[RMDB]
RNA sequence: GGGAACGACUCGAGUAGAGUCGAAAAGGGGUCUUAACAUCGAUCGGUAUAGAGCAUCGAUCUAUACUGAAGCCUCCACGGUAUAGGGAGCUCUAGACCGGGAGUUAAGACGGAGGCACCCAAAACGCGACGAAUUUCUUCGGAAAUUCGUCGCGAACAUUCAUACGCUGUUCGCAGCGUAUGAAUGAAAAGAAACAACAACAACAAC
Reactivity to 2A3 in 0.01 (KOAc 150mM, MgCl2 10mM, bicine 150mM(pH8.5), 24C), signal-to-noise 2, nucleotides 027 to 156: g000g000g060g010u010c010u000u010a010a010c000a040u300c040g010a000u000c000g010g000u010a000u000a010g000a000g000c010a010u300c030g000a000u000c010u000a000u000a000c010u040g080a080a030g000c000c000u000c000c000a000c010g000g000u010a000u000a010g010g000g010a010g000c020u010c000u000a000g010a010c010c000g020g010g000a020g010u000u000a010a000g010a000c000g000g000a000g000g000c000a020c010c000c000a050a070a020a040c010g000c010g000a000c000g000a000a000u030u030u010c040u070u140c240g060g000a010a020a000u000u000c020g000u000c000g000c000g000a000a000